The record gives the reactivity of an RNA of 177 nucleotides to 2A3 and DMS. DMS adducts were read by reverse transcription with MarathonRT. For DMS, 2,059 sequencing reads were counted. The reactions ran in a buffer of 150 mM KOAc, 10 mM MgCl2 and 150 mM bicine (pH 8.5), at 24 C. For 2A3, 3,084 sequencing reads were counted.
RNA sequence: GGGAACGACUCGAGUAGAGUCGAAAACUGGCUCUCCCUUAGCCAUCCGAGUGGACGUCUGUCCUCCUACGGAUGCCCAGGUCGGACCGCGGGGAGGUGGAGAUGCCAUGCCGACCCGAAGAGGAAAGAUAUUCUGAGUGUUCGCACUCAGAAUAUCAAAAGAAACAACAACAACAAC
Reactivity to 2A3 in 0.01 (KOAc 150mM, MgCl2 10mM, bicine 150mM(pH8.5), 24C), signal-to-noise 3, nucleotides 027 to 126: c000u000g000g040c000u000c000u000c050c000c000u030u080a040g050c020c010a000u010c010c020g010a020g030u030g010g010a020c020g120u060c140u200g010u020c000c040u010c000c050u070a060c000g010g000a000u020g020c010c000c010a040g020g070u020c050g040g060a060c020c070g020c090g040g010g010g010a010g020g020u090g020g000a030g000a030u230g020c020c010a020u070g030c000c010g070a070c020c010c010g030a080a040g030a050g080g100a080a030a040
Reactivity to DMS in 0.01 (KOAc 150mM, MgCl2 10mM, bicine 150mM(pH8.5), 24C), signal-to-noise 3, nucleotides 027 to 126: c060u000g010g000c020u000c000u010c010c020c060u000u000a140g010c260c030a090u000c010c000g000a150g020u000g000g010a030c010g030u000c150u020g000u000c010c050u000c100c060u000a070c020g020g000a010u000g020c050c000c020a070g020g020u000c060g020g010a280c120c130g000c040g020g010g000g020a060g020g040u010g010g000a090g000a050u010g020c000c010a040u000g010c010c040g000a190c010c010c020g000a080a110g000a100g000g000a090a070a120